Conditions: 150 mM KOAc, 10 mM MgCl2 and 150 mM bicine (pH 8.5), 24 C. Structure probing data (2A3 and DMS) for a 177-nucleotide construct.

RNA sequence: GGGAACGACUCGAGUAGAGUCGAAAAGAUAUGGAAUGUGCAAGCUUUUGACGGCUCAAGGGUCGGAAACGACCCGAAGGCCGAUAAGCUUGGCAUUCCUAAGUCAAAACUACGGUUCGCCGUAGAAGCAUAUUACCUACUUCGGUAGGUAAUAUGCAAAAGAAACAACAACAACAAC
Reactivity to 2A3 in 0.01 (KOAc 150mM, MgCl2 10mM, bicine 150mM(pH8.5), 24C), signal-to-noise 4, nucleotides 027 to 126: g010a000u090a030u180g010g060a030a020u060g020u300g300c010a000a010g010c010u170u140u190u290g300a210c060g000g000c030u040c100a060a080g010g000g010u000c010g000g000a050a060a040c030g000a010c070c000c000g000a010a010g010g000c000c000g010a000u010a000a000g000c000u000u000g010g000c000a010u000u000c000c000u000a100a010g010u000c010a020a010a100a170c000u010a000c010g010g040u050u080c300g030c140c010g000u000a010g020a070a010
Reactivity to DMS in 0.01 (KOAc 150mM, MgCl2 10mM, bicine 150mM(pH8.5), 24C), signal-to-noise 3, nucleotides 027 to 126: g010a020u020a300u020g010g010a020a010u000g000u010g030c000a000a000g000c000u010u000u020u000g010a240c170g000g000c000u000c020a050a300g000g000g020u010c000g030g000a060a110a240c010g010a020c000c000c000g010a170a250g000g000c010c000g020a090u000a010a020g000c000u000u000g000g000c010a000u010u010c000c010u010a010a070g010u010c050a090a090a110a170c010u010a000c010g000g000u000u020c280g020c020c000g010u010a010g020a080a110